[RMDB]
RNA sequence: GGGAACGACUCGAGUAGAGUCGAAAAGACAGCUAUCUUGAGCUUCUCGCCGCCGGUGUUGAUGAGGGGUGAGUUACGAGGUUAAAUGGCUUUGCGGACAUUUGCUCAUGAGUGAACCUGUAGCGAGGCGAUGGACAAGUUGCAAUUGUAAGCAAAGCGUAGUAUGCACAUUCGUGUGCAUACUACGAAAAGAAACAACAACAACAAC
Reactivity to 2A3 in 0.01 (KOAc 150mM, MgCl2 10mM, bicine 150mM(pH8.5), 24C), signal-to-noise 3, nucleotides 027 to 156: g060a010c040a040g030c040u040a020u150c010u060u090g030a020g010c020u080u030c010u000c030g010c030c030g050c070c030g090g020u080g030u070u170g080a160u030g030a030g000g010g000g010u040g010a030g000u020u060a040c060g040a020g000g020u090u110a070a140a100u150g040g000c000u090u050u070g050c040g000g000a010c050a110u030u000u130g040c020u000c050a050u120g060a040g090u090g040a030a020c000c010u040g010u060a020g010c010g020a030g040g010c020g030a030u030g000g030a000c050a110a080g030u050u010g000c000a040a110u020u070g040u070a050a050g050c070a040a070a010g030
Reactivity to DMS in 0.01 (KOAc 150mM, MgCl2 10mM, bicine 150mM(pH8.5), 24C), signal-to-noise 2, nucleotides 027 to 156: g020a020c060a120g030c010u000a040u010c010u050u020g030a230g020c020u000u020c030u000c010g000c050c020g040c020c070g070g030u000g020u010u000g030a090u000g020a090g010g000g050g020u010g010a080g000u000u010a070c040g000a090g030g010u010u000a060a090a060u010g010g010c000u000u000u010g040c150g010g040a090c080a090u010u010u000g010c030u000c050a060u000g000a050g040u010g010a040a030c050c000u010g060u010a090g000c050g000a090g020g020c000g000a070u010g050g010a050c090a060a170g010u000u010g020c030a050a240u010u000g040u000a050a120g010c110a070a050a100g010
Source information:
Conditions: 150 mM KOAc, 10 mM MgCl2 and 150 mM bicine (pH 8.5), 24 C. The record gives the reactivity of an RNA of 207 nucleotides to 2A3 and DMS. Reactivities are given for positions 27 through 156.